[RMDB]
RNA sequence: GGGAACGACUCGAGUAGAGUCGAAAACAGAAGGUGAAGGAGAAGAAAGGCACCUUCUUCACAGGGCGGCAGGAAGGAGAAGUGUGGAACAAAGUGGGAAAAGCCCCUUAUAGGCUGGGUGCAGUGGCUCAGCCUAUUAUCCCAGCGCUUUGGGAGGCAUACGAAUUGCAUUCGUGCAAUUCGUAUGAAAAGAAACAACAACAACAAC
Reactivity to 2A3 in 0.01 (KOAc 150mM, MgCl2 10mM, bicine 150mM(pH8.5), 24C), signal-to-noise 4, nucleotides 027 to 156: c050a020g100a090a030g020g010u030g020a050a030g030g050a070g020a100a070g070a080a140a030g060g000c040a040c020c000u020u010c000u010u020c020a040c010a020g060g020g000c080g040g000c020a020g040g010a030a010g020g050a020g020a010a040g060u090g020u130g070g010a060a020c020a040a060a020g030u080g020g010g050a050a100a010a030g060c000c010c000c000u040u070a010u000a030g000g010c000u010g000g010g010u100g030c090a080g030u080g130g000c000u000c000a010g020c010c000u000a000u000u020a000u000c030c000c000a030g030c090g010c080u130u050u010g010g000g000a000g030g000
Reactivity to DMS in 0.01 (KOAc 150mM, MgCl2 10mM, bicine 150mM(pH8.5), 24C), signal-to-noise 2, nucleotides 027 to 156: c030a140g000a100a070g020g030u000g010a110a050g030g010a120g020a090a080g030a080a100a120g010g030c080a070c040c010u000u000c010u000u000c030a050c040a160g020g010g020c220g000g000c080a090g000g020a040a020g010g000a070g000a050a050g040u020g030u010g010g010a070a120c080a030a060a080g000u000g000g010g000a070a040a050a170g000c000c010c000c030u000u000a080u000a010g010g000c040u000g020g000g040u000g010c030a230g000u000g010g000c000u000c000a030g020c000c000u000a010u000u000a080u000c020c010c010a080g020c100g020c110u020u010u000g020g020g020a050g020g000